[RMDB]
RNA sequence: GGGAACGACUCGAGUAGAGUCGAAAAUGCAGAAAGCUUGUCCAAAUAUGGCCAGAAGUAGUAGGACUUCAACUUACCAUCUCUGAGGGCAUGCAGUUCAGAAAAAGUGCUCAUAUAGGCUUUGUUCCACACAGGGUUUAUUCGUAAACCCUGUGUGAAAAGAAACAACAACAACAAC
Reactivity to DMS in 0.01 (KOAc 150mM, MgCl2 10mM, bicine 150mM(pH8.5), 24C), signal-to-noise 4, nucleotides 027 to 126: u010g010c110a080g010a090a100a070g010c010u000u010g000u010c020c020a100a140a080u010a050u000g000g010c060c080a080g010a040a050g020u010a100g020u010a090g000g010a150c090u010u010c130a080a120c070u010u010a050c040c020a040u010c070u000c050u010g000a140g000g010g000c030a040u000g000c050a050g010u010u000c090a070g010a050a050a040a050a080g000u000g010c020u010c050a040u000a080u010a090g000g010c040u000u000u000g010u000u000c050
Reactivity to 2A3 in 0.01 (KOAc 150mM, MgCl2 10mM, bicine 150mM(pH8.5), 24C), signal-to-noise 2, nucleotides 027 to 126: u120g010c020a040g100a050a060a030g010c010u040u040g010u000c010c000a010a070a080u200a040u060g020g030c050c020a030g000a070a000g030u090a010g010u040a040g020g110a070c000u040u000c060a080a060c020u080u110a020c000c000a040u050c080u010c040u130g060a070g010g000g000c020a010u010g000c030a030g040u070u090c030a020g140a030a140a010a010a000g030u040g030c010u050c130a040u110a020u080a120g030g000c000u080u060u040g050u100u050c010
The record gives the reactivity of an RNA of 177 nucleotides to DMS and 2A3. Values cover nucleotides 27 to 126. The RNA was probed in 150 mM KOAc, 10 mM MgCl2 and 150 mM bicine (pH 8.5) at 24 C. 2A3 adducts were read by reverse transcription with SuperScript II with manganese.